An RNA of 177 nucleotides, treated with 2A3 and DMS and read out base by base. For DMS, 15,310 sequencing reads were counted. Source: RMDB library TTRDEL, as collected in RNAgym. The 2A3 profile rests on 35,237 reads. The reactions ran in a buffer of 150 mM KOAc, 10 mM MgCl2 and 150 mM bicine (pH 8.5), at 24 C.
[RMDB]
RNA sequence: GGGAACGACUCGAGUAGAGUCGAAAAGAUAUGGAAGCUUUGUCAGCUCUACGAGUAUAUCGGAAACGAUAUAUGGCGGAGAGCUUGGAUUUAAGCUUCCUAAGUCAAACGCUGCUUCGGCAGCGAAGAUGAGGUAUAUGUUCGCAUAUACCUCAUCAAAAGAAACAACAACAACAAC
Reactivity to 2A3 in 0.01 (KOAc 150mM, MgCl2 10mM, bicine 150mM(pH8.5), 24C), signal-to-noise 7, nucleotides 027 to 126: g010a020u060a020u130g000g010a000a000g000c010u030u010u030g020u020c000a000g000c010u010c000u010a020c000g000a010g030u010a000u010a000u010c010g030g020a090a060a030c020g000a000u010a000u010a010u060g300g130c020g020g010a010g010a000g000c000u010u070g020g000a030u200u290u220a010a000g000c000u000u000c000c000u000a050a010g020u000c030a070a050a070c020g000c000u010g000c000u040u060c290g170g000c000a000g000c000g010a010a030
Reactivity to DMS in 0.01 (KOAc 150mM, MgCl2 10mM, bicine 150mM(pH8.5), 24C), signal-to-noise 9, nucleotides 027 to 126: g000a040u000a300u010g000g000a010a010g010c000u000u000u000g000u000c010a030g000c000u000c000u000a050c000g010a300g010u000a000u000a000u000c000g010g000a130a100a210c000g010a010u000a000u000a000u000g010g010c010g000g010a010g000a010g000c010u000u010g010g010a010u000u010u000a010a010g010c000u000u000c000c000u000a020a090g000u010c030a120a120a220c030g010c000u000g000c000u000u010c200g030g000c000a010g000c000g010a010a050